[RMDB]
RNA sequence: GGGAACGACUCGAGUAGAGUCGAAAAGGGCCAUGUACCUAUCCAAAAUGAGAUCCCAUCUUGCACACUGUGCUAAUUUGAAAUUCUCAUGCCUCCUACUUGGAGAGAUCUGGACUAGAAGUCAGGGAAUAGGUCGUUUCUUUCGAGAAACGACCAAGAGUCUGUCCUGAUUCGUCAGGACAGACUCAAAAGAAACAACAACAACAAC
Reactivity to 2A3 in 0.01 (KOAc 150mM, MgCl2 10mM, bicine 150mM(pH8.5), 24C), signal-to-noise 2, nucleotides 027 to 156: g080g040g010c080c000a190u190g050u050a030c040c000u060a090u120c050c010a030a030a080a110u040g000a010g010a030u010c080c020c000a020u000c020u060u080g000c020a010c000a070c150u240g000u010g080c010u110a060a080u030u040u150g080a100a050a060u120u030c010u010c020a030u080g030c020c020u050c000c000u110a230c090u090u220g010g010a040g010a010g000a020u040c020u060g020g090a030c020u060a060g070a160a000g130u040c060a020g000g100g000a060a110u150a150g000g020u000c000g000u000u000u000c010u050u090u070c110g060a000g010a000a000a000c000g000a000c010c000a000a000